The data come from the RNA Mapping Database (RMDB), library OK3TST. The record gives the reactivity of an RNA of 207 nucleotides to 2A3 and DMS. The reactions ran in a buffer of 150 mM KOAc, 10 mM MgCl2 and 150 mM bicine (pH 8.5), at 24 C. The 2A3 profile rests on 2,396 reads.
RNA sequence: GGGAACGACUCGAGUAGAGUCGAAAAGAUAAGGAUAAAGAUAAUGGAUGAGAAACAAGCACAGCAAGUAGCAGAGCAGGAAGUUCAAGUAGCAGUGUACAACUGUGGUGACGGUCUGCGUGAACUAUUCGCUAACAUUCGUGAGUGGGCUGAGGCACGGACCUAAUUAGUUCGCUAAUUAGGUCCGAAAAGAAACAACAACAACAAC
Reactivity to 2A3 in 0.01 (KOAc 150mM, MgCl2 10mM, bicine 150mM(pH8.5), 24C), signal-to-noise 4, nucleotides 027 to 156: g050a050u100a020a060g060g000a040u080a100a090a020g020a030u090a090a060u150g030g010a010u040g020a030g050a040a090a010c080a070a000g050c050a010c060a050g030c020a070a040g010u040a010g040c060a000g020a020g020c040a040g020g030a040a030g020u060u070c050a110a050g000u050a040g060c030a000g010u040g030u150a060c080a100a030c070u060g020u060g060g140u090g040a010c020g020g010u000c010u020g000c020g010u030g010a020a010c010u020a090u110u090c020g000c030u030a060a060c040a080u040u100c060g010u030g080a040g030u030g000g010g000c040u030g030a050g060g000c020a000
Reactivity to DMS in 0.01 (KOAc 150mM, MgCl2 10mM, bicine 150mM(pH8.5), 24C), signal-to-noise 1, nucleotides 027 to 156: g050a160u000a090a080g000g010a150u010a020a140a050g000a120u010a130a110u030g010g030a040u030g000a130g000a110a090a090c100a010a070g040c050a110c060a080g000c000a020a050g040u000a030g000c010a070g030a160g010c020a070g010g000a000a060g010u000u000c030a030a140g020u000a110g000c010a050g020u010g030u000a040c130a040a030c030u000g050u010g010g040u060g020a040c040g010g010u000c030u000g040c020g000u000g020a080a060c040u000a140u000u000c050g020c010u000a070a090c050a130u010u010c040g000u000g010a050g020u000g040g030g010c010u010g010a080g060g040c080a180
For DMS the reverse transcriptase was MarathonRT.